[RMDB]
RNA sequence: GGGAACGACUCGAGUAGAGUCGAAAAGAUAUGGAUCUGUCUACCGGGAGGAGAGUAUCGGAAACGAUACUACUCCAUCGAUCGGUAGAGCAGAUCCUAAGUCAAAACGCUACGUUCGCGUAGCGAACCUACUCGUUCUGUUCGCAGAACGAGUAGGAAAAGAAACAACAACAACAAC
Reactivity to 2A3 in 0.01 (KOAc 150mM, MgCl2 10mM, bicine 150mM(pH8.5), 24C), signal-to-noise 4, nucleotides 027 to 126: g020a000u080a030u190g000g000a000u000c010u010g030u000c000u000a000c020c010g020g060g040a050g000g000a010g010a010g000u010a010u010c010g030g010a100a060a030c010g000a000u010a010c000u070a280c000u010c000c000a030u180c010g050a080u090c000g020g000u000a000g000a020g000c000a000g000a000u000c000c000u000a030a000g010u000c040a010a010a070a160c020g000c010u000a010c010g030u030u080c300g000c010g220u010a000g000c000g020a020a020
Reactivity to DMS in 0.01 (KOAc 150mM, MgCl2 10mM, bicine 150mM(pH8.5), 24C), signal-to-noise 4, nucleotides 027 to 126: g010a050u000a300u000g000g000a000u010c000u010g000u000c000u000a010c000c000g010g010g020a050g010g010a020g000a070g010u000a010u000c000g010g000a170a100a200c010g010a010u000a000c010u000a080c010u000c000c010a160u010c250g000a090u010c000g000g020u000a000g000a070g000c000a010g010a010u000c000c000u000a000a080g010u010c060a090a080a070a170c020g010c000u000a000c010g000u010u010c250g010c030g040u000a000g000c020g010a030a060

Annotation: Conditions: 150 mM KOAc, 10 mM MgCl2 and 150 mM bicine (pH 8.5), 24 C. Chemical mapping of a 177-nucleotide RNA with 2A3 and DMS. Reactivities are rounded to 0.1 and cut off at 0 and 3. The 2A3 profile rests on 18,610 reads. DMS adducts were read by reverse transcription with MarathonRT.